[RMDB]
RNA sequence: GGGAACGACUCGAGUAGAGUCGAAAAAGAAUAAGCAAGAAGGGCAUCAGCUAAGACGGCUGCCAAAACCAUGCUAUAGAACACAGGGCACUUGCUGGGCAAUGGAUUUCUUUGCUGGUACAUCUGGCUUUGCUGCCCCUGAAAACUAAAUAUUGUAUGGCAUAUUACCAUUCGUGGUAAUAUGCCAAAAAGAAACAACAACAACAAC
Reactivity to DMS in 0.01 (KOAc 150mM, MgCl2 10mM, bicine 150mM(pH8.5), 24C), signal-to-noise 1, nucleotides 027 to 156: a120g010a120a050u010a100a080g040c010a060a070g030a120a100g020g040g090c060a090u000c050a060g000c010u000a090a080g010a110c120g000g020c080u000g000c050c050a050a040a150a090c060c000a050u010g010c050u010a200u020a110g010a070a100c120a040c070a030g040g020g030c010a050c070u000u000g020c020u000g040g030g000c020a030a060u000g030g000a160u000u000u000c020u000u010u000g000c000u000g020g000u000a060c020a050u000c030u000g020g000c030u000u030u000g020c020u000g030c050c010c030c040u000g000a040a000a100a070c010u010a060a070a090u000a080u000u030g030u030a290
Reactivity to 2A3 in 0.01 (KOAc 150mM, MgCl2 10mM, bicine 150mM(pH8.5), 24C), signal-to-noise 1, nucleotides 027 to 156: a000g080a010a050u140a050a060g030c030a000a070g040a030a050g050g010g000c010a060u030c010a030g000c000u030a020a020g060a020c040g040g020c010u060g050c040c030a080a110a000a010c030c070a020u070g020c040u060a020u090a200g060a080a000c060a010c040a100g000g000g010c010a030c120u040u150g000c040u010g040g000g000c030a030a080u060g020g080a040u030u090u000c020u000u000u050g000c000u040g000g020u010a030c000a030u060c000u010g010g000c000u050u100u020g000c010u020g030c010c000c000c010u000g060a090a030a000a000c040u100a060a050a110u130a070u040u140g030u030a030

Overview
The record gives the reactivity of an RNA of 207 nucleotides to DMS and 2A3. Source: RMDB library OK3TST, as collected in RNAgym. The reactions ran in a buffer of 150 mM KOAc, 10 mM MgCl2 and 150 mM bicine (pH 8.5), at 24 C.